[RMDB]
RNA sequence: GGGAACGACUCGAGUAGAGUCGAAAACUCUGCAUAUUCGUAUGCAGAGAAAUAACGCUCGGCUCAUGCAGCUAGUCGAACAUGCUGCUCGACCUUUUGGUAAAAACCGGAGGUUCGCCUCCGGUAAGAUUAGAAUAUAAUUCGUUAUAUUCUAAUCAAAAGAAACAACAACAACAAC
Reactivity to 2A3 in 0.01 (KOAc 150mM, MgCl2 10mM, bicine 150mM(pH8.5), 24C), signal-to-noise 3, nucleotides 027 to 126: c000u000c000u000g010c000a010u020a050u070u120c180g070u040a000u010g000c000a000g000a010g020a000a090a000u050a030a020c040g030c050u020c000g010g020c010u020c040a040u120g010c000a000g010c020u060a030g100u100c080g030a040a040c040a050u110g010c000u010g000c000u030c030g040a070c020c010u050u130u150u280g190g000u130a110a090a020a020a000c010c000g030g000a000g010g010u030u020c160g040c010c000u040c020c140g010g000u000a000a000
Reactivity to DMS in 0.01 (KOAc 150mM, MgCl2 10mM, bicine 150mM(pH8.5), 24C), signal-to-noise 5, nucleotides 027 to 126: c000u000c000u010g010c010a000u000a030u000u010c190g020u000a000u000g000c000a010g000a010g010a010a050a050u010a100a170c300g000c040u000c030g020g010c020u000c030a090u000g000c040a040g010c030u000a130g000u000c110g000a080a170c100a080u010g010c030u000g010c010u000c070g010a090c030c020u010u010u010u010g020g010u010a080a040a040a080a030c020c000g000g000a010g000g010u000u010c250g010c010c000u000c000c000g000g000u000a000a020
This 177-nucleotide RNA was probed chemically with 2A3 and DMS. For 2A3, 3,939 sequencing reads were counted. For DMS the reverse transcriptase was MarathonRT. The data come from the RNA Mapping Database (RMDB), library M2PK50. High 2A3 reactivity points to a flexible backbone, as in loops and unpaired stretches.